[RMDB]
Chemical mapping of a 207-nucleotide RNA with DMS and 2A3. The DMS profile rests on 5,685 reads. 2A3 adducts were read by reverse transcription with SuperScript II with manganese. It was measured as part of the RMDB library RNAMAK. For 2A3, 11,559 sequencing reads were counted. The reactions ran in a buffer of 150 mM KOAc, 10 mM MgCl2 and 150 mM bicine (pH 8.5), at 24 C.

RNA sequence: GGGAACGACUCGAGUAGAGUCGAAAAGCGUACUACUCAGAGGAAUGUGGGAGAUCCGCCCGAAAUCCCAAAUAGGAUUUCGUAACAAGAUCAUCGAUCACAUUCUACCCACCUGAGUAUCGCAAAACAGCUUACCCUGUUCGCAGGGUAAGCUGAACCUCAAAUACAACUUCGGUUGUAUUUGAGGAAAAGAAACAACAACAACAAC
Reactivity to DMS in 0.01 (KOAc 150mM, MgCl2 10mM, bicine 150mM(pH8.5), 24C), signal-to-noise 3, nucleotides 027 to 156: g010c020g030u000a070c110u000a020c010u010c000a030g000a230g020g000a030a020u000g030u000g000g010g010a250g000a000u010c020c010g000c260c180c000g020a000a000a050u010c000c010c020a040a190a230u010a040g040g020a040u000u000u000c000g030u000a070a070c080a120a030g010a010u000c010a160u000c150g000a210u000c000a020c010a030u000u000c000u000a040c000c010c030a300c150c000u000g010a010g010u000a010u010c010g020c010a070a050a100a160c000a000g030c000u000u000a010c020c000c000u000g000u000u000c300g040c000a010g000g010g020u000a000a000g010c010u000g000a000a090
Reactivity to 2A3 in 0.01 (KOAc 150mM, MgCl2 10mM, bicine 150mM(pH8.5), 24C), signal-to-noise 8, nucleotides 027 to 156: g010c010g030u090a100c030u010a010c000u010c010a010g010a010g020g020a010a000u000g000u010g010g010g000a050g000a010u020c030c030g050c050c030c010g010a000a000a010u030c030c030c050a190a290a140u300a100g000g000a000u000u000u000c020g040u100a120a100c090a160a050g020a040u060c030a060u190c120g080a070u100c010a000c000a000u000u000c000u010a020c020c020c010a080c010c000u000g020a000g000u010a030u300c010g000c020a010a030a020a080c000a000g000c000u000u010a000c000c000c000u010g020u040u120c270g000c080a000g000g000g010u000a000a010g000c000u000g000a000a010